RNA sequence: GGGAACGACUCGAGUAGAGUCGAAAAACUGUGGCCUGGUGCCUGCCAAAGCCUCUACCCAAGGGAACGGAGGAUAAUGAUCAGAGAGCAACGAUACCCAGUUUGUCUGCCAUGCUGGGUAAGGACAAGGUGGGGUGAGUGGUCUCAUACUUGGGCACACUGAUGACUCAUUCGUGAGUCAUCAGUGAAAAGAAACAACAACAACAAC
Reactivity to 2A3 in 0.01 (KOAc 150mM, MgCl2 10mM, bicine 150mM(pH8.5), 24C), signal-to-noise 2, nucleotides 027 to 156: a000c130u150g050u060g020g000c020c000u010g080g000u070g010c030c020u040g000c020c020a050a010a000g040c020c000u010c040u050a030c000c000c000a040a070g040g010g020a110a030c140g040g030a010g010g000a010u010a180a110u300g210a020u130c100a000g030a000g000a000g040c010a030a100c030g040a030u130a120c000c000c040a120g050u000u000u090g020u000c000u080g020c040c000a090u130g090c060u250g030g000g010u040a200a000g020g000a000c000a030a020g030g180u030g000g000g050g010u030g010a050g010u110g000g050u020c000u020c010a060u180a110c070u050u030g000g000g050c020a000
Chemical mapping of a 207-nucleotide RNA with 2A3. The 2A3 profile rests on 659 reads. The RNA was probed in 150 mM KOAc, 10 mM MgCl2 and 150 mM bicine (pH 8.5) at 24 C. Source: RMDB library OK3TST, as collected in RNAgym.